Record summary:
Structure probing data (2A3 and DMS) for a 177-nucleotide construct. DMS adducts were read by reverse transcription with MarathonRT.
RNA sequence: GGGAACGACUCGAGUAGAGUCGAAAACAGGCUGGAUUACAUCAAUAGUAACUUGAGCAGAAGUAAACAGAACAAGAAGUAGUGCGGUUAUUCAAGUUCAAAGUUCACACUAUCGCAAUAAAUAUAAAGAAAAGCAAAUAUUCGUAUUUGCUUUUCUAAAAGAAACAACAACAACAAC
Reactivity to 2A3 in 0.01 (KOAc 150mM, MgCl2 10mM, bicine 150mM(pH8.5), 24C), signal-to-noise 2, nucleotides 027 to 126: c020a000g070g000c040u050g000g050a100u010u060a030c030a040u080c030a040a090u090a080g030u050a040a030c040u050u050g060a000g010c070a020g010a180a000g020u030a050a140a000c010a030g080a060a000c050a130a000g100a070a000g050u080a030g030u030g070c010g000g030u040u000a040u100u070c040a050a020g000u010u020c000a120a060a000g000u060u050c030a040c010a040c120u060a040u110c020g010c010a030a050u150a230a130a030u300a080u180a120a160
Reactivity to DMS in 0.01 (KOAc 150mM, MgCl2 10mM, bicine 150mM(pH8.5), 24C), signal-to-noise 2, nucleotides 027 to 126: c050a080g010g020c030u000g020g020a090u010u000a040c040a080u000c060a080a080u000a040g010u010a050a040c030u000u000g000a060g020c130a090g000a060a040g040u010a020a070a050c060a060g000a050a030c060a040a170g000a090a110g010u000a040g010u010g010c040g000g000u000u010a070u000u000c050a030a110g000u000u010c070a030a060a130g000u000u000c050a050c060a040c090u010a030u010c080g020c040a060a070u000a060a030a050u010a100u010a060a090
The reactions ran in a buffer of 150 mM KOAc, 10 mM MgCl2 and 150 mM bicine (pH 8.5), at 24 C. For DMS, 1,603 sequencing reads were counted.